[RMDB]
RNA sequence: GGGAACGACUCGAGUAGAGUCGAAAACAAAUGAGUCCGGUGAAGGUGACGUUGCAUAUCAGGCGCGGCUUCCUUCCGAAUUUUGUGCGCAAAAGUUUCCAGAUGAUGAUAACUGUGAGGAGGACGAUCAGGACUGCCGCCAGUAGGUAGCAGCCGGUACAUCAGUAGGUUUCGACCUACUGAUGUAAAAAGAAACAACAACAACAAC
Reactivity to DMS in 0.01 (KOAc 150mM, MgCl2 10mM, bicine 150mM(pH8.5), 24C), signal-to-noise 3, nucleotides 027 to 156: c050a100a130a120u000g030a120g020u010c050c000g020g050u010g030a110a050g050g030u010g010a070c020g030u000u000g090c040a140u010a120u010c210a260g020g030c030g000c030g000g030c040u000u000c010c020u000u020c030c040g020a050a060u000u010u000u000g020u000g050c070g040c070a020a070a150a150g000u000u010u000c020c020a150g000a140u010g000a110u000g010a100u010a050a060c060u000g030u020g020a080g030g000a070g010g010a050c040g010a150u000c120a060g010g020a030c020u000g010c000c040g000c030c010a180g040u000a050g070g040u000a020g000c010a010g000c010c010g030g040
Reactivity to 2A3 in 0.01 (KOAc 150mM, MgCl2 10mM, bicine 150mM(pH8.5), 24C), signal-to-noise 3, nucleotides 027 to 156: c040a010a070a050u180g000a050g040u050c030c040g000g030u220g020a000a000g000g010u030g020a020c030g030u090u270g120c030a100u170a100u260c120a110g100g050c000g000c000g020g010c020u180u100c020c010u020u000c010c000g040a020a000u030u070u070u090g020u040g040c070g010c070a030a020a030a100g020u010u060u020c020c010a060g010a090u100g010a030u060g010a010u070a210a050c010u050g050u060g110a030g000g040a010g030g020a010c020g010a030u040c040a010g050g090a090c000u010g020c020c020g000c000c000a030g140u190a080g080g020u020a020g020c000a000g000c000c010g010g020